RNA sequence: GGGAACGACUCGAGUAGAGUCGAAAACAAUUUCUCCUCUGUACCAGGCCAUGUGCUAGGUAUUUGGGAGGGAAGUGCAAGCCGGACACAAGCCAGCACUGAAGAUAGUGUCAGAAGAAAGACAGCCAUGAACACACAUGACCAUAUGACACAUGGACUAUGAGCUCCAGUUCGCUGGAGCUCAUAGAAAAGAAACAACAACAACAAC
Reactivity to 2A3 in 0.01 (KOAc 150mM, MgCl2 10mM, bicine 150mM(pH8.5), 24C), signal-to-noise 2, nucleotides 027 to 156: c040a080a180u030u140u020c020u010c020c000u010c020u000g000u000a000c000c000a030g020g000c000c000a040u130g070u240g000c030u050a070g000g000u000a000u020u040u070g040g000g010a010g040g000g000a060a060g030u030g000c000a050a000g020c030c000g150g020a080c050a000c030a140a070g060c010c010a040g040c030a000c020u080g020a150a030g010a200u240a050g050u020g030u030c010a010g030a050a070g100a040a180a000g110a000c070a000g000c080c020a000u040g100a170a010c080a000c000a000c010a200u130g000a020c000c030a030u110a050u170g010a000c010a000c020a000u020g010g030a000